An RNA of 177 nucleotides, treated with 2A3 and DMS and read out base by base. Conditions: 150 mM KOAc, 10 mM MgCl2 and 150 mM bicine (pH 8.5), 24 C. For 2A3 the reverse transcriptase was SuperScript II with manganese. For 2A3, 520 sequencing reads were counted. It was measured as part of the RMDB library OK1LIB.

[RMDB]
RNA sequence: GGGAACGACUCGAGUAGAGUCGAAAAUAUGGAAGAACGACGUGUGUUUCUGCACCCGUGAGCUGUCGAUCCUUGUAUGUCAUACACCGUAAGCCCAAUCUUCCUUCGUAAGACGUUAUGAUCAGCGAAGCUGCGUCUGUUUCGACAGACGCAGCUUAAAAGAAACAACAACAACAAC
Reactivity to 2A3 in 0.01 (KOAc 150mM, MgCl2 10mM, bicine 150mM(pH8.5), 24C), signal-to-noise 1, nucleotides 027 to 126: u100a000u050g110g090a000a040g120a210a040c070g060a000c000g140u090g030u020g080u120u000u000c020u130g000c000a100c010c000c000g000u100g060a000g030c000u070g050u080c060g050a020u030c050c050u000u040g130u120a040u000g030u040c020a000u000a020c040a000c000c020g000u000a000a000g050c010c000c000a050a170u000c000u000u110c000c020u090u060c070g020u000a090a000g000a000c050g000u100u170a040u170g110a190u050c080a000g080c040g100
Reactivity to DMS in 0.01 (KOAc 150mM, MgCl2 10mM, bicine 150mM(pH8.5), 24C), signal-to-noise 1, nucleotides 027 to 126: u010a040u000g020g000a040a100g000a220a040c050g000a040c030g000u000g070u020g000u010u000u000c000u120g000c070a160c040c050c090g000u000g000a040g000c000u000g000u000c000g070a030u000c000c050u000u000g040u040a070u000g010u000c170a070u010a070c120a050c030c040g020u010a160a110g010c030c000c000a070a160u000c040u000u020c010c000u000u040c070g010u000a190a000g000a080c080g000u050u000a090u010g000a020u040c060a070g000c210g020